[RMDB]
RNA sequence: GGGAACGACUCGAGUAGAGUCGAAAAAGCUCCGGGGCUACCCACACGUUCAUGCCUAACUUCGCUCUGGAGUGGCUGAUCAACGCCUACCACAGGCGCGGCGCCGACAUCGAAGGCAUCGACCUACGAUGGCGCUUGACUUCGGUCAAGCGCCAUCAAAAGAAACAACAACAACAAC
Reactivity to 2A3 in 0.01 (KOAc 150mM, MgCl2 10mM, bicine 150mM(pH8.5), 24C), signal-to-noise 1, nucleotides 027 to 126: a000g010c000u030c000c030g000g000g000g000c000u010a060c000c040c000a060c000a050c040g080u020u000c080a060u000g030c030c010u030a140a130c030u110u070c080g050c060u000c040u170g000g000a040g000u060g000g010c000u030g060a180u140c070a120a050c030g000c000c010u020a100c020c090a140c020a090g030g030c000g000c000g000g000c010g000c000c050g030a030c000a070u110c030g130a030a000g030g000c000a030u000c010g110a210c000c090u070a050c160
This 177-nucleotide RNA was probed chemically with 2A3. The reactions ran in a buffer of 150 mM KOAc, 10 mM MgCl2 and 150 mM bicine (pH 8.5), at 24 C. For 2A3, 432 sequencing reads were counted. Source: RMDB library OK1LIB, as collected in RNAgym.